[RMDB]
RNA sequence: GGGAACGACUCGAGUAGAGUCGAAAAGAGAAACUGAUGGUAAAGGUGGGCAAAUGCAAAAGAGUGGUAUUACGUAAAGCAUAGAAUGCAUUUUGUUUUCUUGUUAAAUGUAGGCCAAGGCGACAUGCAGAAACUAUGCUUUCGAGCAUAGUUUCUGAAAAGAAACAACAACAACAAC
Reactivity to 2A3 in 0.01 (KOAc 150mM, MgCl2 10mM, bicine 150mM(pH8.5), 24C), signal-to-noise 2, nucleotides 027 to 126: g070a010g010a020a050a020c030u030g010a050u090g060g000u080a050a070a020g000g020u040g010g000g000c010a040a050a080u090g000c030a000a020a060a060g080a030g020u070g050g010u070a100u160u080a040c020g020u040a060a020a050g020c000a020u040a130g060a100a030u050g000c040a010u130u090u070u070g060u030u050u010u020c030u040u000g060u020u050a080a110a030u100g010u040a020g000g080c020c010a030a050g000g000c010g040a020c030a040u130g000
Reactivity to DMS in 0.01 (KOAc 150mM, MgCl2 10mM, bicine 150mM(pH8.5), 24C), signal-to-noise 4, nucleotides 027 to 126: g000a130g000a070a070a090c100u000g000a070u010g000g010u000a040a090a080g010g030u000g010g010g010c070a030a050a060u010g010c100a030a070a070a110g000a110g030u000g000g000u010a060u010u010a040c070g020u000a040a080a090g010c010a040u000a050g000a030a100u000g020c020a080u000u010u000u000g020u000u010u000u000c020u010u000g010u000u000a050a130a050u000g000u010a050g000g000c050c040a030a080g020g010c080g000a040c140a070u010g010
The record gives the reactivity of an RNA of 177 nucleotides to 2A3 and DMS. For 2A3, 2,789 sequencing reads were counted. For 2A3 the reverse transcriptase was SuperScript II with manganese. The RNA was probed in 150 mM KOAc, 10 mM MgCl2 and 150 mM bicine (pH 8.5) at 24 C.